RNA sequence: GGGAACGACUCGAGUAGAGUCGAAAAAAAGAUAUCGAGCGCGCCCUAUGGUCAUCUCAGCCGGGACAGAGACCCGGCGAAGAGUGCAAGAGCAAAAGAUGACUUGACAGUGUUCUUCCCAACGAGGAACGCUGACGCGAAAGCGUGGUCUAGCGAACCAAAAUAGAGUCUUCGGACUCUAUUUUGGAAAAGAAACAACAACAACAAC
Reactivity to 2A3 in 0.01 (KOAc 150mM, MgCl2 10mM, bicine 150mM(pH8.5), 24C), signal-to-noise 1, nucleotides 027 to 156: a010a010a000g070a020u110a010u120c030g010a020g090c030g010c010g010c000c010c000u030a080u100g030g000u010c010a010u000c000u010c100a030g000c050c010g000g040g000a080c100a100g270a050g030a100c000c020c020g010g000c010g000a050a000g040a010g020u060g010c040a210a030g010a010g150c000a000a070a070a000g010a010u020g000a000c000u000u090g000a010c010a010g020u000g000u010u010c000u040u050c060c030c030a040a030c130g020a030g010g000a000a010c030g010c010u010g010a060c100g000c010g070a140a010a010g010c000g010u040g050g010u050c060u060a010g000c010g030a030a020
The data come from the RNA Mapping Database (RMDB), library PDB130. Structure probing data (2A3) for a 207-nucleotide construct.